[RMDB]
This 207-nucleotide RNA was probed chemically with 2A3. The reactions ran in a buffer of 150 mM KOAc, 10 mM MgCl2 and 150 mM bicine (pH 8.5), at 24 C. It was measured as part of the RMDB library OK3TST.

RNA sequence: GGGAACGACUCGAGUAGAGUCGAAAACGUCUGACCCAUUCUGACCUGAGACUGUGCAGAUUUGGGCCUGGGGUGGGGAUAGCCGUAUGUGGUGACCAGGGGUAGAGACCUCCUGGCUCCUGAGCCCACAGGAUUUAAUCCACUGUCAGCUUGUCAAGCUAUUUACCCAUUUCGAUGGGUAAAUAGCAAAAGAAACAACAACAACAAC
Reactivity to 2A3 in 0.01 (KOAc 150mM, MgCl2 10mM, bicine 150mM(pH8.5), 24C), signal-to-noise 4, nucleotides 027 to 156: c020g070u020c050u050g090a070c010c000c000a040u080u040c040u090g070a100c010c020u100g060a040g060a150c050u090g060u130g140c150a070g000a170u060u060u090g020g000g010c020c060u060g020g000g000g000u060g000g020g000g020a060u090a040g030c020c000g070u110a150u190g110u070g020g000u030g030a160c000c010a020g070g020g000g000u070a100g060a040g010a300c010c000u060c010c000u010g020g000c000u030c010c000u010g040a020g020c010c000c030a060c010a010g010g010a010u090u090u210a050a040u020c020c000a010c030u030g080u050c040a030g050c080u110u060g050u080c050a080a020